Structure probing data (2A3) for a 207-nucleotide construct. Reactivities are given for positions 27 through 156. The 2A3 profile rests on 801 reads. 2A3 adducts were read by reverse transcription with SuperScript II with manganese.
RNA sequence: GGGAACGACUCGAGUAGAGUCGAAAAAUUGCGGGGACGCCCUUAGAGCUUCACGUACGGCCAAUCGUUCGAAAGGAUUGAUUUGGCAUCAGGUUAAUGGCCUCGAGUAUCGUAAUAACCGUGAAGAUUGGGUAAUCCGCAGCCAAGUGCUAAACAACUACACGAAGAACUUCGGUUCUUCGUGUAGAAAAGAAACAACAACAACAAC
Reactivity to 2A3 in 0.01 (KOAc 150mM, MgCl2 10mM, bicine 150mM(pH8.5), 24C), signal-to-noise 1, nucleotides 027 to 156: a000u150u060g000c000g000g000g010g010a020c020g060c000c010c040u060u090a170g020a030g090c030u020u000c000a000c000g010u020a000c000g020g000c000c000a010a000u010c020g010u000u000c000g100a150a020a010g080g010a020u120u300g060a020u100u110u210g020g000c000a000u000c000a000g000g000u000u000a050a010u020g010g000c010c010u020c070g020a000g000u110a300u300c020g000u000a010a010u020a020a000c000c000g020u000g020a010a000g000a010u060u130g000g000g000u020a070a050u030c000c020g000c000a000g010c000c000a090a090g090u130g050c050u150a090a060a070c020a000a060